[RMDB]
The record gives the reactivity of an RNA of 207 nucleotides to 2A3 and DMS. The reactions ran in a buffer of 150 mM KOAc, 10 mM MgCl2 and 150 mM bicine (pH 8.5), at 24 C. Values cover nucleotides 27 to 156. Source: RMDB library OK3TST, as collected in RNAgym. For DMS the reverse transcriptase was MarathonRT.
RNA sequence: GGGAACGACUCGAGUAGAGUCGAAAAUGAUGUGCACACAUGUUGAUCGCGAUUGUACGAUACUAGCUAGUAUCGAUCGCAACGCGUCAGCCGUACAAUCGAUAUUAACCGUAACAUGUGCGCCACGUGCGUGACAUCGCGACACCGGUUAAUUGUAGUAUAUAUUCGUAUUCGUACGAAUAUAUACAAAAGAAACAACAACAACAAC
Reactivity to 2A3 in 0.01 (KOAc 150mM, MgCl2 10mM, bicine 150mM(pH8.5), 24C), signal-to-noise 9, nucleotides 027 to 156: u160g020a010u050g020u060g040c020a020c010a010c030a140u150g010u020u030g060a120u200c090g000c040g180a300u010u010g010u020a010c000g000a010u010a020c010u020a050g260c130u160a010g010u000a010u020c010g010a050u100c110g000c020a010a020c010g000c000g020u020c000a000g010c040c050g020u040a020c060a090a150u050c040g070a030u020a020u130u030a020a010c020c020g020u040a030a010c010a030u010g000u010g000c000g010c000c010a210c200g100u280g010c010g010u030g090a110c030a060u100c120g010c050g100a020c040a040c070c010g000g020u010u020a020a020u040u100g110u080a080
Reactivity to DMS in 0.01 (KOAc 150mM, MgCl2 10mM, bicine 150mM(pH8.5), 24C), signal-to-noise 6, nucleotides 027 to 156: u000g000a070u000g020u000g030c040a050c030a100c060a100u000g030u000u000g010a070u000c060g050c010g020a170u000u010g030u000a070c010g020a060u000a040c040u000a170g020c070u010a300g030u000a020u000c010g010a030u000c060g010c010a040a060c030g020c030g020u000c060a070g030c040c140g040u000a060c040a030a060u000c020g010a120u000a060u000u000a030a030c020c010g010u000a170a050c020a040u000g020u000g020c010g010c020c010a060c110g020u000g020c030g020u000g030a100c020a050u000c060g030c050g010a140c020a090c230c000g010g020u000u000a020a060u000u000g010u010a220